The record gives the reactivity of an RNA of 177 nucleotides to 2A3. The 2A3 profile rests on 580 reads. Values cover nucleotides 27 to 126. The reactions ran in a buffer of 150 mM KOAc, 10 mM MgCl2 and 150 mM bicine (pH 8.5), at 24 C. For 2A3 the reverse transcriptase was SuperScript II with manganese.

RNA sequence: GGGAACGACUCGAGUAGAGUCGAAAAGAUCAGCUUUCUUCGGACCAUGUCCUGAAAAUUUGAUUGAGUUACUUAAGGAUGAUAUUUCAAUUAAAUUAGAUGAGACUGGUAUGUUUCGAAAGUCUCCCGGCAGAUAGGGGUUCGCCCCUAUCUGCCGAAAAGAAACAACAACAACAAC
Reactivity to 2A3 in 0.01 (KOAc 150mM, MgCl2 10mM, bicine 150mM(pH8.5), 24C), signal-to-noise 2, nucleotides 027 to 126: g000a140u090c070a030g060c010u000u000u040c000u050u000c000g050g000a060c010c000a080u300g000u040c010c000u030g010a110a000a000a000u000u000u000g030a010u000u010g000a010g100u050u050a030c020u100u080a150a090g290g050a260u280g090a120u060a070u090u200u030c000a000a000u000u000a000a000a000u000u000a030g000a010u050g000a030g010a180c000u000g000g020u050a000u010g020u000u050u010c090g010a010a010a030g050u050c090u010c000c000